Chemical mapping of a 177-nucleotide RNA with 2A3 and DMS. The DMS profile rests on 18,477 reads. The 2A3 profile rests on 13,273 reads.

[RMDB]
RNA sequence: GGGAACGACUCGAGUAGAGUCGAAAAGGAUCACAUCAAGUCGGCGUCGACACGCCGGGAGCGCCCGCAGGACAUCGCCGCAUGGCACGACGGUGACGCCAGCGUGUCAUCGGUUGACCCGGCUGACAAGAAGUUAUGGAUUCGUCCAUAACUUCUUAAAAGAAACAACAACAACAAC
Reactivity to 2A3 in 0.01 (KOAc 150mM, MgCl2 10mM, bicine 150mM(pH8.5), 24C), signal-to-noise 4, nucleotides 027 to 126: g060g010a050u120c030a030c010a140u100c090a140a050g040u040c020g020g090c070g090u120c050g080a040c030a010c090g000c000c010g010g000g010a050g000c050g010c020c010c010g030c040a040g030g060a030c010a060u040c020g010c030c000g060c110a040u030g010g010c010a010c020g090a020c020g020g040u090g130a060c130g070c030c010a010g020c000g000u010g000u000c010a010u030c000g040g000u040u090g000a010c020c010c000g010g000c040u050g020a020c050
Reactivity to DMS in 0.01 (KOAc 150mM, MgCl2 10mM, bicine 150mM(pH8.5), 24C), signal-to-noise 9, nucleotides 027 to 126: g010g000a070u010c070a090c110a200u010c130a090a090g010u000c020g000g010c130g020u000c090g010a070c110a110c100g010c010c010g000g000g000a110g000c080g010c020c010c070g010c080a090g010g020a090c150a100u000c030g010c010c020g000c180a030u000g000g000c020a030c010g010a070c040g000g000u000g000a140c200g010c000c010a110g010c030g010u000g010u000c010a020u000c020g000g010u000u000g000a050c060c000c010g000g010c020u000g000a100c180